[RMDB]
RNA sequence: GGGAACGACUCGAGUAGAGUCGAAAAUCGCUUAACUACGCUGGGGCUUUGUGGGACAUUACAGUUAUAAACAAUGUGGACAAUGAAAUUGUUAAGUCUUCAGAUGUUGUAGACAGCAAUGAAAAUUACUAUAGGAUCAGUUCGCUGAUCCUAUAGUAAAAGAAACAACAACAACAAC
Reactivity to DMS in 0.01 (KOAc 150mM, MgCl2 10mM, bicine 150mM(pH8.5), 24C), signal-to-noise 2, nucleotides 027 to 126: u010c150g010c010u010u020a080a090c060u010a070c090g020c030u000g000g000g000g000c080u000u020u000g040u010g020g010g000a060c020a040u010u000a050c140a080g000u000u000a110u020a160a040a060c070a020a060u010g010u030g000g010a040c060a060a060u000g010a050a040a300u000u000g010u000u000a090a120g020u000c000u010u000c010a070g000a050u000g020u000u000g000u000a040g010a100c120a020g010c060a030a110u000g000a020a090a070a090u000u040
Reactivity to 2A3 in 0.01 (KOAc 150mM, MgCl2 10mM, bicine 150mM(pH8.5), 24C), signal-to-noise 1, nucleotides 027 to 126: u040c010g000c030u070u030a080a020c020u040a010c070g000c020u000g010g010g000g020c020u010u060u010g040u070g080g010g030a030c020a030u030u150a030c010a060g050u020u100a060u040a090a020a060c050a030a060u100g010u050g060g000a020c000a030a020u080g060a050a050a070u050u010g040u090u210a160a040g000u000c020u040u070c030a030g030a300u170g100u210u000g000u060a000g000a030c080a000g020c000a020a010u050g040a090a030a000a000u040u000
Chemical mapping of a 177-nucleotide RNA with DMS and 2A3. The 2A3 profile rests on 749 reads. Conditions: 150 mM KOAc, 10 mM MgCl2 and 150 mM bicine (pH 8.5), 24 C. Values cover nucleotides 27 to 126. 2A3 adducts were read by reverse transcription with SuperScript II with manganese. For DMS the reverse transcriptase was MarathonRT. It was measured as part of the RMDB library 15KREP. 2A3 is a SHAPE reagent: it acylates the 2'-hydroxyl of flexible nucleotides of all four kinds.